Chemical mapping of a 207-nucleotide RNA with 2A3. The RNA was probed in 150 mM KOAc, 10 mM MgCl2 and 150 mM bicine (pH 8.5) at 24 C. Source: RMDB library ARCHII, as collected in RNAgym. Reactivities are rounded to 0.1 and cut off at 0 and 3.

[RMDB]
RNA sequence: GGGAACGACUCGAGUAGAGUCGAAAAAGCGUGGCGUCGACAAGGCGUCGGGACAGGAGUGUCGCCGGCACCUGGUCGCAUAAUGAGGGGCGUACGGCUCAGGGCCGAAAGGCAGCAGGCAAAAGUCCCCGCGUCAUGACAGUGGUCGGAUAGCGCUACCUCUACUUCUCUUCGGAGAAGUAGAGGUAAAAGAAACAACAACAACAAC
Reactivity to 2A3 in 0.01 (KOAc 150mM, MgCl2 10mM, bicine 150mM(pH8.5), 24C), signal-to-noise 2, nucleotides 027 to 156: a000g020c050g000u010g010g000c020g010u070c020g020a010c020a050a000g000g020c040g030u010c060g000g010g000a020c030a000g100g110a190g230u100g040u010c160g110c190c000g000g000c000a030c030c000u060g000g030u060c040g000c020a040u160a050a070u050g020a110g000g000g000g000c030g060u110a030c020g060g000c030u060c070a020g000g010g010c010c010g040a020a010a000g000g000c000a000g000c000a000g000g000c000a000a020a000a100g060u130c000c000c000c000g000c010g000u020c000a000u050g030a030c020a030g070u090g040g010u110c060g050g030a080u080a040g080c030g030c010u010